[RMDB]
RNA sequence: GGGAACGACUCGAGUAGAGUCGAAAAUUCCCCUAUUUCGAUAGGGGAACACCUGCGGGCGGCUCGCAGUUCCGACUUCCUCCUCCUCUGAGUCAAACGGCGAUAGGCCUCGGUUCGCCGAGGCCAAGAUAAUUGUGUAAUUCGUUACACAAUUAUCAAAAGAAACAACAACAACAAC
Reactivity to 2A3 in 0.01 (KOAc 150mM, MgCl2 10mM, bicine 150mM(pH8.5), 24C), signal-to-noise 2, nucleotides 027 to 126: u020u000c010c000c010c000u020a020u040u080u070c180g080a010u010a000g010g000g000g000a000a010c020a050c010c020u020g030c040g020g030g020c020g030g030c040u060c030g010c020a010g000u060u050c040c030g060a060c020u070u050c000c010u020c000c000u000c000c000u000c020u070g010a030g000u010c020a090a100a060c060g050g020c030g020a030u070a120g000g000c000c000u000c000g000g030u000u030c140g000c060c000g000a000g000g050c000c000a000a000
Reactivity to DMS in 0.01 (KOAc 150mM, MgCl2 10mM, bicine 150mM(pH8.5), 24C), signal-to-noise 5, nucleotides 027 to 126: u000u000c000c000c000c000u000a000u000u000u020c150g010a030u000a010g010g010g000g000a010a010c120a090c080c010u000g010c060g000g020g010c070g000g010c040u000c040g010c050a070g000u000u000c020c020g000a100c060u000u000c030c010u000c020c020u000c010c010u000c020u000g010a110g020u000c060a060a110a120c110g000g010c050g010a110u000a120g010g010c000c000u000c000g000g000u000u010c200g020c000c000g000a010g010g020c010c010a010a010
Structure probing data (2A3 and DMS) for a 177-nucleotide construct. For 2A3, 6,053 sequencing reads were counted. The RNA was probed in 150 mM KOAc, 10 mM MgCl2 and 150 mM bicine (pH 8.5) at 24 C. For DMS the reverse transcriptase was MarathonRT.